[RMDB]
RNA sequence: GGGAACGACUCGAGUAGAGUCGAAAAGAAAUUACGUUUCCUUUACACUUCUCAAACCGGGAUCAAGAGAAGCAAAGCAUCCCUCAUUUCCACGAUGGAGGGUGUCGUGGAGUAUACUGUACCAAAAAGAGCGAACACGGCUUCGGCCGUGUUCGAACAGAAUAUGGUUCUUCGGAACCAUAUUCUGAAAAGAAACAACAACAACAAC
Reactivity to DMS in 0.01 (KOAc 150mM, MgCl2 10mM, bicine 150mM(pH8.5), 24C), signal-to-noise 3, nucleotides 027 to 156: g000a090a050a070u000u000a070c120g010u010u000u000c020c020u000u000u000a130c080a060c020u000u000c000u000c000a030a200a110c060c040g030g010g010a120u000c070a160a300g020a040g000a000a040g040c000a070a100a130g020c040a090u000c000c000c000u000c050a100u000u000u000c050c090a080c110g010a040u000g000g010a050g000g030g020u000g030u000c020g000u010g000g010a130g020u000a100u000a070c120u000g020u000a120c040c050a040a040a090a090a120g010a120g000c010g010a020a010c000a030c030g020g020c030u000u010c300g090g000c000c000g040u000g000u000u000c010g000a020a060
Reactivity to 2A3 in 0.01 (KOAc 150mM, MgCl2 10mM, bicine 150mM(pH8.5), 24C), signal-to-noise 8, nucleotides 027 to 156: g030a000a070a020u200u120a040c050g010u010u030u030c020c000u020u060u090a070c060a030c020u020u010c010u010c060a170a100a080c060c050g050g010g010a040u060c080a230a050g000a010g020a040a030g040c120a050a040a010g010c010a040u020c010c010c000u060c040a090u060u070u020c010c010a010c030g010a010u040g070g050a040g060g030g000u050g010u010c010g000u010g010g010a010g010u010a010u020a050c090u080g100u130a080c030c060a030a090a060a030a050g120a040g080c010g000a000a000c000a000c010g000g010c010u040u070c200g040g000c000c000g010u000g000u000u000c000g000a000a000
Chemical mapping of a 207-nucleotide RNA with DMS and 2A3.
For DMS the reverse transcriptase was MarathonRT.
Values cover nucleotides 27 to 156.
As a SHAPE reagent, 2A3 marks flexible, mostly unpaired nucleotides at the ribose 2'-OH.
Source: RMDB library M2RFPK, as collected in RNAgym.